Conditions: 150 mM KOAc, 10 mM MgCl2 and 150 mM bicine (pH 8.5), 24 C. This 177-nucleotide RNA was probed chemically with DMS and 2A3. DMS adducts were read by reverse transcription with MarathonRT.
RNA sequence: GGGAACGACUCGAGUAGAGUCGAAAAGAUAUGGAGACGAGUGGGACAUGGUAGUAGAUCGGAAACGAUCUAUACCAACAGCCCACCGUCUCCUAAGUCAAAACAGUCCCUGUUCGCAGGGACUGAAGUUAUAGAGUAACUUCGGUUACUCUAUAACAAAAGAAACAACAACAACAAC
Reactivity to DMS in 0.01 (KOAc 150mM, MgCl2 10mM, bicine 150mM(pH8.5), 24C), signal-to-noise 5, nucleotides 027 to 126: g020a020u000a140u010g000g000a020g000a010c000g000a170g030u000g000g010g010a030c090a130u010g010g010u000a020g060u000a000g010a000u000c010g020g000a030a020a050c000g010a010u000c000u000a020u000a000c000c000a040a060c180a250g000c000c000c000a010c000c010g000u000c000u010c000c000u000a000a060g000u000c010a130a090a130a290c010a000g000u000c000c000c000u000g010u000u010c250g030c010a010g000g000g010a010c010u000g000a010a070
Reactivity to 2A3 in 0.01 (KOAc 150mM, MgCl2 10mM, bicine 150mM(pH8.5), 24C), signal-to-noise 4, nucleotides 027 to 126: g010a020u030a010u080g000g000a000g000a000c030g050a110g130u010g000g030g020a080c170a300u140g010g040u030a090g270u020a000g030a010u000c000g000g000a020a000a010c010g000a000u000c010u000a000u000a000c000c000a050a080c130a070g010c010c000c000a000c000c000g000u000c000u000c010c000u000a000a000g000u000c000a010a000a050a090c010a000g000u000c020c010c000u000g020u030u110c300g000c090a000g000g000g000a000c000u000g010a010a000

For 2A3 the reverse transcriptase was SuperScript II with manganese.